[RMDB]
RNA sequence: GGGAACGACUCGAGUAGAGUCGAAAAAAAAGAUAUGGAUCCGUGAACUACGAAAUGAAGAAGCGAUGAAAGCUCUCGGAAACGAGAGCUGGAGCUUUCAAAGUUCGCACGGAUCCUAAGUCAAAAACGUAUGGUAUACGUUCGCGUAUACCAUACGAAAAGAAACAACAACAACAAC
Reactivity to 2A3 in 0.01 (KOAc 150mM, MgCl2 10mM, bicine 150mM(pH8.5), 24C), signal-to-noise 1, nucleotides 027 to 126: a000a000a000a000g060a000u050a020u070g020g000a010u000c010c030g000u000g040a130a020c080u170a030c300g030a010a110a090u210g050a100a170g050a050a000g030c050g300a300u050g000a080a040a010g000c000u000c000u000c010g000g050a010a080a030c010g020a010g000a000g000c000u000g000g010a010g000c030u000u040u070c050a100a100a000g020u030u010c010g000c010a000c000g000g000a010u000c000c000u000a010a000g030u050c000a050a000a000a000a140
Reactivity to DMS in 0.01 (KOAc 150mM, MgCl2 10mM, bicine 150mM(pH8.5), 24C), signal-to-noise 2, nucleotides 027 to 126: a070a010a100a070g000a020u010a300u030g000g030a010u010c010c000g040u000g000a080a080c130u060a300c020g010a010a000a030u010g010a250a170g000a000a010g020c000g040a090u020g000a210a150a020g000c000u020c010u010c000g010g000a050a100a080c000g000a010g000a010g010c000u000g010g000a020g020c010u000u000u020c020a050a220a110g010u000u010c030g040c010a000c000g000g000a010u000c010c010u010a040a080g010u010c030a080a100a060a090a140